[RMDB]
RNA sequence: GGGAACGACUCGAGUAGAGUCGAAAAUGCAACAGUGGGUGGAUAAGGCUGGAGGUUCUGCUGAAGAUUUUGUCAUGAUGGACAUGGGGCAUGAAUAUGCUCUUAUAGAUAGUGACGAUUCGUUAUCGUCUCUAGAGAGGUUCGCCUCUCUAGAGACAAAAGAAACAACAACAACAAC
Reactivity to DMS in 0.01 (KOAc 150mM, MgCl2 10mM, bicine 150mM(pH8.5), 24C), signal-to-noise 4, nucleotides 027 to 126: u000g010c080a110a080c110a080g050u000g010g010g020u010g010g000a100u010a070a090g010g010c040u000g000g000a060g010g020u000u000c060u010g020c040u010g010a100a090g010a070u000u000u010u000g010u000c000a010u000g000a120u000g010g020a100c170a090u000g000g000g000g020c010a010u010g010a090a080u010a040u000g010c010u000c000u000u000a070u000a060g010a100u010a100g010u010g000a020c020g010a060u000u000c130g000u000u000a090u020c110
Reactivity to 2A3 in 0.01 (KOAc 150mM, MgCl2 10mM, bicine 150mM(pH8.5), 24C), signal-to-noise 3, nucleotides 027 to 126: u100g000c010a030a030c010a070g040u060g040g020g030u070g030g020a040u050a090a060g040g020c030u020g050g020a020g010g070u070u030c030u050g030c020u020g060a080a060g030a140u010u070u070u110g020u010c010a010u050g090a090u120g100g040a010c030a070u050g000g000g010g010c010a010u040g060a090a050u300a010u060g000c000u000c010u010u070a060u020a000g040a030u040a020g010u010g030a020c040g020a100u050u020c050g040u070u080a070u170c040
This 177-nucleotide RNA was probed chemically with DMS and 2A3. As a SHAPE reagent, 2A3 marks flexible, mostly unpaired nucleotides at the ribose 2'-OH. Conditions: 150 mM KOAc, 10 mM MgCl2 and 150 mM bicine (pH 8.5), 24 C. For 2A3, 2,615 sequencing reads were counted. For 2A3 the reverse transcriptase was SuperScript II with manganese. High DMS reactivity at an A or C suggests that its Watson-Crick edge is free.